[RMDB]
Structure probing data (2A3 and DMS) for a 207-nucleotide construct. DMS adducts were read by reverse transcription with MarathonRT. For 2A3, 2,506 sequencing reads were counted. Source: RMDB library M2RFPK, as collected in RNAgym.

RNA sequence: GGGAACGACUCGAGUAGAGUCGAAAACCGUGACAUUGCGAAAGCAAGUCUGGCGGUAGGUAGUCCUGGGCGGCGACAGCCUUGGACUGCGGCGUAAAGGUGUACCUGGGGCCGUUAAACCUAUCGUGAAAGGCAACUUGGUUCGCCAAGUUGCCAACCACGGAUAAGAGUUCGCUCUUAUCCGUGGAAAAGAAACAACAACAACAAC
Reactivity to 2A3 in 0.01 (KOAc 150mM, MgCl2 10mM, bicine 150mM(pH8.5), 24C), signal-to-noise 3, nucleotides 027 to 156: c020c010g040u050g000a030c230a290u020u030g020c020g040a100a060a000g000c010a020a000g000u000c020u040g050g040c000g010g010u000a000g020g010u030a010g000u000c000c020u060g020g000g000c030g080g020c160g070a070c100a080g010c000c000u000u010g010g000a010c010u010g010c000g000g020c020g050u120a050a050a010g020g020u200g090u290a220c000c010u020g000g000g130g010c000c010g000u000u050a140a170a040c010c000u000a000u000c010g000u020g070a020a120a030g000g000c000a000a000c010u000u010g000g040u050u060c110g050c120c000a000a000g000u000u000g000c000c000a000a000
Reactivity to DMS in 0.01 (KOAc 150mM, MgCl2 10mM, bicine 150mM(pH8.5), 24C), signal-to-noise 2, nucleotides 027 to 156: c100c000g030u010g010a090c050a110u010u000g000c000g000a110a130a300g040c000a000a030g030u000c000u000g030g000c000g010g060u000a020g000g010u000a030g030u000c000c000u000g020g060g000c030g010g000c070g040a090c140a170g030c000c010u000u000g020g000a040c010u000g010c000g040g000c030g080u000a060a300a040g000g030u000g020u000a090c010c010u010g020g000g030g000c000c000g010u120u000a040a120a140c050c000u000a030u000c000g020u000g000a240a110a150g000g000c000a020a000c000u000u000g000g000u010u000c300g000c010c000a000a030g000u000u000g020c000c020a000a010